An RNA of 177 nucleotides, treated with DMS and read out base by base.
RNA sequence: GGGAACGACUCGAGUAGAGUCGAAAAUAUAUGAAAGGUUUGCACAGAGGGUUUCUAUUAGGAGCAUGUCUACCCCCUGUUUAUUCCAGAUACGGUACAUUAGACACUAAGGCUCAAUUAAGAUUCAUAAAUACGGACGAUUCGUCGUCCGUAUUUAAAAAGAAACAACAACAACAAC
Reactivity to DMS in 0.01 (KOAc 150mM, MgCl2 10mM, bicine 150mM(pH8.5), 24C), signal-to-noise 1, nucleotides 027 to 126: u010a060u010a090u000g000a100a090a120g000g000u000u010u010g020c120a050c100a090g000a060g010g000g020u000u000u000c060u010a090u010u010a050g010g020a030g000c050a070u000g000u000c060u000a130c030c040c050c060c030u000g000u020u010u000a100u000u000c100c040a070g000a080u000a040c180g020g000u010a150c110a110u000u000a010g000a110c030a030c300u010a060a050g010g010c010u010c040a110a200u000u020a030a130g010a060u010u000c100a140
It was measured as part of the RMDB library OK2TST.